Structure probing data (2A3 and DMS) for a 170-nucleotide construct.
Reactivities are given for positions 27 through 129.
[RMDB]
RNA sequence: GGGAACGACUCGAGUAGAGUCGAAAAGAUCCACCAGGAGAAGGAGCGGAGAACCCACCUCCAGAGGACCCCUUCAGCGAACAGAAGGGCUCCUCCUCCUCGGGAGUAGGCCCGUAGCGAUGGGGAGAUACAGGCCUGUUCGCAGGCCUGAAAAGAAACAACAACAACAAC
Reactivity to 2A3 in 0.01 (KOAc 150mM, MgCl2 10mM, bicine 150mM(pH8.5), 24C), signal-to-noise 4, nucleotides 027 to 129: g040a090u050c000c000a040c000c040a070g000g030a020g010a020a010g020g020a040g030c030g020g030a030g030a060a060c040c000c010a050c000c030u040c000c010a000g010a000g040g020a060c000c000c000c010u000u020c020a050g010c020g060a020a010c020a060g040a020a020g040g000g000c000u000c000c000u010c010c030u010c020c010u020c030g010g010g040a030g040u040a030g000g100c000c030c050g040u040a030g030c030g050a060u140g000g000g000g020a050g010a010u120a040
Reactivity to DMS in 0.01 (KOAc 150mM, MgCl2 10mM, bicine 150mM(pH8.5), 24C), signal-to-noise 5, nucleotides 027 to 129: g010a060u020c010c040a080c090c030a050g000g000a030g050a040a090g020g010a080g110c110g050g020a050g020a100a110c050c040c070a160c140c020u040c020c030a140g010a060g030g050a100c100c000c030c020u000u000c050a100g020c000g000a000a030c080a100g010a060a050g030g030g010c140u040c020c030u010c000c050u040c020c040u000c110g040g000g010a080g020u020a060g010g030c060c000c030g000u060a050g030c040g020a040u050g000g000g000g000a070g010a150u000a130
About this RNA: For DMS, 14,651 sequencing reads were counted. For 2A3, 9,313 sequencing reads were counted. Source: RMDB library 15KLIB, as collected in RNAgym. Conditions: 150 mM KOAc, 10 mM MgCl2 and 150 mM bicine (pH 8.5), 24 C.